[RMDB]
RNA sequence: GGGAACGACUCGAGUAGAGUCGAAAAGGUUCAUACCUUUAUCUGCCAAAACGGGACCUCUGUUGAGGUAUAACCAAUAUUCCGUACUAAGGAUUUCGGUCCGGAACGUCUAGAGACUACACGGCAGCACAAAUUUACUCUUCGGAGUAAAUUUGUGAAAAGAAACAACAACAACAAC
Reactivity to 2A3 in 0.01 (KOAc 150mM, MgCl2 10mM, bicine 150mM(pH8.5), 24C), signal-to-noise 2, nucleotides 027 to 126: g040g000u110u190c070a020u270a220c000c030u000u120u040a100u010c010u020g020c020c000a000a000a000a000c010g000g000g000a000c000c010u030c040u210g240u300u240g050a000g020g030u010a000u000a010a050c010c010a000a010u070a130u300u040c010c010g000u010a000c000u010a010a000g000g040a000u020u040u160c280g170g010u010c000c040g000g010a010a000c030g000u010c000u030a050g010a010g020a300c030u050a040c020a010c020g000g010c020a010g000
Reactivity to DMS in 0.01 (KOAc 150mM, MgCl2 10mM, bicine 150mM(pH8.5), 24C), signal-to-noise 2, nucleotides 027 to 126: g010g030u000u010c260a150u020a190c010c000u000u000u000a070u020c020u020g020c000c000a030a020a010a030c010g010g000g020a020c020c010u000c000u010g000u000u000g020a010g000g020u000a010u000a010a190c200c110a000a040u000a090u000u000c000c000g000u000a020c020u010a040a020g000g000a130u000u000u020c110g000g000u010c000c010g000g010a020a020c130g000u010c010u020a140g000a150g000a060c050u010a040c180a070c130g000g000c000a050g010